The record gives the reactivity of an RNA of 177 nucleotides to 2A3 and DMS.
It was measured as part of the RMDB library VIROID.
[RMDB]
RNA sequence: GGGAACGACUCGAGUAGAGUCGAAAAACCGCCCGAUAGGGGAUUCAAGGUAAAGAGCAUUGGAACGCCGAGGGGAAGUACUCCCAAGAAGGAAAAGGGAGGUUCAAGAAGUGGAAGACUUUCCCCAGUAUAGAAGACAGUUCGCUGUCUUCUAUACAAAAGAAACAACAACAACAAC
Reactivity to 2A3 in 0.01 (KOAc 150mM, MgCl2 10mM, bicine 150mM(pH8.5), 24C), signal-to-noise 1, nucleotides 027 to 126: a000c020c030g040c090c040c040g050a180u140a050g000g000g000g040a080u130u130c080a060a100g040g030u120a160a110a000g030a090g000c010a040u030u190g000g000a100a050c060g020c060c040g080a130g000g000g000g000a020a040g000u000a030c000u020c010c010c020a050a030g190a040a040g100g060a030a140a020a030g030g000g000a000g020g030u000u050c100a110a010g010a120a000g140u070g050g110a150a030g040a070c020u050u030u060c000c000c000c000a000
Reactivity to DMS in 0.01 (KOAc 150mM, MgCl2 10mM, bicine 150mM(pH8.5), 24C), signal-to-noise 2, nucleotides 027 to 126: a100c040c090g030c010c020c030g020a170u010a120g000g000g020g010a070u010u000c090a030a100g010g020u000a020a080a080g010a070g000c040a050u000u010g010g000a040a160c130g000c070c070g000a080g010g010g000g010a070a040g010u010a110c040u010c010c000c010a060a100g020a100a100g010g020a040a030a100a050g010g000g030a030g000g010u000u000c090a070a030g000a070a060g010u010g000g010a070a100g000a060c050u000u000u000c000c010c000c090a140